RNA sequence: GGGAACGACUCGAGUAGAGUCGAAAACAACUGUUAUCUUGCCACUGCAUUGUUAACACUCCAACGAAUAGAGUUGAAGUUUAAUCCACCUGCUCUACAAAGGGCUGGUGAAGCUGCUAACUUUUGUCAACAUUUGCCUUCGGGCAAAUGAAAAGAAACAACAACAACAAC
Reactivity to DMS in 0.01 (KOAc 150mM, MgCl2 10mM, bicine 150mM(pH8.5), 24C), signal-to-noise 5, nucleotides 027 to 129: c070a130a140c070u020g010u040u030a000u080c040u020u030g050c040c170a100c110u050g030c070a040u000u000g060u060u060a030a090c000a050c080u040c020c030a050a120c100g090a220a120u070a110g020a080g010u010u010g020a090a050g020u020u010u110a000a090u010c130c030a020c010c010u030g020c000u000c000u030a130c300a080a150a120g020g010g080c010u020g030g060u020g020a000a000g020c080u010g050c070u000a000a000c030u040u010u000u090g050u000c000a000a100
Reactivity to 2A3 in 0.01 (KOAc 150mM, MgCl2 10mM, bicine 150mM(pH8.5), 24C), signal-to-noise 6, nucleotides 027 to 129: c020a000a000c030u040g010u050u040a100u100c040u050u170g040c020c030a080c070u110g020c030a060u070u070g050u050u100a030a020c030a000c080u010c020c000a000a030c050g100a150a080u170a190g120a020g060u000u020g030a030a000g000u060u010u120a070a020u070c040c000a010c000c010u020g000c000u040c000u050a110c090a070a240a090g000g010g020c010u010g010g000u010g000a030a000g010c010u010g020c010u030a030a020c000u050u050u010u030g040u060c040a030a030
An RNA of 170 nucleotides, treated with DMS and 2A3 and read out base by base. Conditions: 150 mM KOAc, 10 mM MgCl2 and 150 mM bicine (pH 8.5), 24 C. DMS adducts were read by reverse transcription with MarathonRT. 2A3 adducts were read by reverse transcription with SuperScript II with manganese. Source: RMDB library 15KLIB, as collected in RNAgym.